[RMDB]
RNA sequence: GGGAACGACUCGAGUAGAGUCGAAAAGAUAUAGAAUACCAGAAUGUAUUCUGGGUCUACUUACAGUAUAUAGAAAAACUGUAUAAAGACCUUACAGGACACAUGCUUGACAGUUAUUCUGUCAUGCGUGAUGAAUAAUCUUCGGAUUAUUCAUCACAAAAGAAACAACAACAACAAC
Reactivity to DMS in 0.01 (KOAc 150mM, MgCl2 10mM, bicine 150mM(pH8.5), 24C), signal-to-noise 3, nucleotides 027 to 126: g020a150u010a130u000a100g000a100a090u010a090c030c070a170g010a150a110u010g020u000a050u000u000c000u000g010g000g000u000c020u000a090c250u010u010a010c000a010g010u000a050u010a300u000a070g000a090a090a150a070a050c000u000g020u020a010u010a100a140a060g010a000c010c010u000u000a220c110a010g020g000a040c090a050c020a070u000g000c010u000u000g000a020c000a020g010u010u000a060u020u000c000u010g000u000c000a000u000g010c080
Reactivity to 2A3 in 0.01 (KOAc 150mM, MgCl2 10mM, bicine 150mM(pH8.5), 24C), signal-to-noise 3, nucleotides 027 to 126: g010a010u140a010u080a140g050a060a020u040a030c020c020a030g140a180a050u070g020u030a020u000u040c020u020g000g000g000u000c000u020a060c030u010u000a000c010a000g020u020a070u030a030u090a240g160a030a110a020a010a010c000u010g010u050a020u020a020a120a020g000a000c000c000u000u050a030c030a020g040g030a030c020a010c010a040u110g000c000u020u020g010a000c000a020g030u050u080a140u300u110c010u030g000u030c000a000u010g000c010